[RMDB]
RNA sequence: GGGAACGACUCGAGUAGAGUCGAAAAGAUAUGGACCUCUAUGAAGGGGAGAACUCGCCGUCGGAAACGACGGAAACGUUCAUCGAUCUGGAGAGGUCCUAAGUCAAAACUCACCUUCGGGUGAGAAGUUGCAAUAGUUGUUCGCAACUAUUGCAACAAAAGAAACAACAACAACAAC
Reactivity to DMS in 0.01 (KOAc 150mM, MgCl2 10mM, bicine 150mM(pH8.5), 24C), signal-to-noise 1, nucleotides 027 to 126: g010a040u010a300u020g000g000a020c000c000u000c000u000a130u010g000a190a170g000g000g000g020a080g010a020a020c020u010c300g000c030c000g010u000c000g000g000a170a060a170c010g010a000c010g000g000a010a090a040c210g010u000u020c000a110u000c100g010a150u000c010u000g010g000a020g030a010g020g000u000c000c020u000a010a050g020u010c040a030a080a100a160c010u010c000a010c010c000u000u040c120g010g020g000u010g000a000g000a020a070
Reactivity to 2A3 in 0.01 (KOAc 150mM, MgCl2 10mM, bicine 150mM(pH8.5), 24C), signal-to-noise 2, nucleotides 027 to 126: g010a000u040a080u090g010g000a010c060c020u040c010u070a300u300g040a050a050g030g030g040g000a040g000a040a000c020u040c160g040c020c010g010u000c010g000g010a110a060a020c020g000a000c010g000g000a040a030a000c060g010u070u040c030a140u300c040g000a040u010c000u120g030g030a010g000a010g020g000u000c010c010u000a010a000g000u000c020a000a010a060a140c000u000c010a000c000c000u040u030c290g090g010g010u000g000a000g000a000a030